[RMDB]
RNA sequence: GGGAACGACUCGAGUAGAGUCGAAAAGGCUCAGGACGAACGCUGGCGGCGUGCUUAACACAUGCAAGUCGAGCGGUAAGGCCCUUCGGGGUACACGAGCGGCGAACGGGUGAGUAACACGUGGGUGUGAGAUUCCCUGUUUCGACAGGGAAUCUCAAAAAGAAACAACAACAACAAC
Reactivity to DMS in 0.01 (KOAc 150mM, MgCl2 10mM, bicine 150mM(pH8.5), 24C), signal-to-noise 2, nucleotides 027 to 126: g080g020c080u000c010a030g000g000a100c100g020a110a140c060g020c020u010g060g030c040g070g020c000g000u000g000c060u000u050a100a170c110a130c040a070u010g050c040a000a300g020u000c040g010a050g040c000g000g010u020a010a030g000g000c000c000c050u070u040c160g020g000g000g000u030a000c070a130c020g000a060g010c040g020g000c050g030a050a160c080g000g000g040u000g000a110g000u000a030a060c040a030c030g000u060g000g000g000u000g020
Reactivity to 2A3 in 0.01 (KOAc 150mM, MgCl2 10mM, bicine 150mM(pH8.5), 24C), signal-to-noise 2, nucleotides 027 to 126: g050g010c020u030c040a060g030g110a050c020g070a150a030c040g020c030u010g030g000c000g030g010c010g040u070g000c070u050u060a110a000c030a000c010a110u020g000c030a000a200g000u070c000g060a010g000c030g020g000u050a040a030g030g000c000c000c020u000u030c170g090g000g000g010u060a020c030a000c020g020a000g010c000g000g000c000g010a020a020c020g000g000g000u010g010a050g070u060a060a000c010a000c020g020u110g010g070g040u110g040